[RMDB]
RNA sequence: GGGAACGACUCGAGUAGAGUCGAAAAAGCGGAGGCAUUCGAAGCGGUGCGUUGUCUGCGUGACCAGCACAAUCAGAGGUACGUCUCGCUCGAGGGGGGUCUGCCCGCGGUGCGGGCGUCGCUGUACCGGUGUAUAUCCAUUCGUGGAUAUACACCGAAAAGAAACAACAACAACAAC
Reactivity to 2A3 in 0.01 (KOAc 150mM, MgCl2 10mM, bicine 150mM(pH8.5), 24C), signal-to-noise 3, nucleotides 027 to 126: a000g050c040g010g040a020g000g020c030a040u090u110c070g060a110a030g050c060g010g020u030g030c030g040u000u080g040u050c020u040g090c040g050u070g050a050c000c050a030g030c020a030c000a050a110u140c020a030g030a040g090g110u100a030c020g020u000c050u040c050g000c000u000c020g010a080g000g030g010g000g020g090u050c090u140g140c040c010c000g000c050g090g060u180g030c000g050g000g000c010g000u050c010g010c030u050g020u090a050c000
Reactivity to DMS in 0.01 (KOAc 150mM, MgCl2 10mM, bicine 150mM(pH8.5), 24C), signal-to-noise 5, nucleotides 027 to 126: a110g010c040g010g010a070g010g000c050a070u020u000c040g010a110a100g010c070g010g010u010g010c030g000u000u000g000u010c020u000g020c110g020u000g000a120c070c060a120g000c120a050c110a080a070u000c050a060g010a080g000g020u010a050c040g010u000c020u000c020g010c010u000c020g000a050g000g010g000g000g000g010u000c110u010g020c010c000c000g020c030g010g000u000g020c030g010g010g010c010g010u000c050g020c030u000g000u010a110c170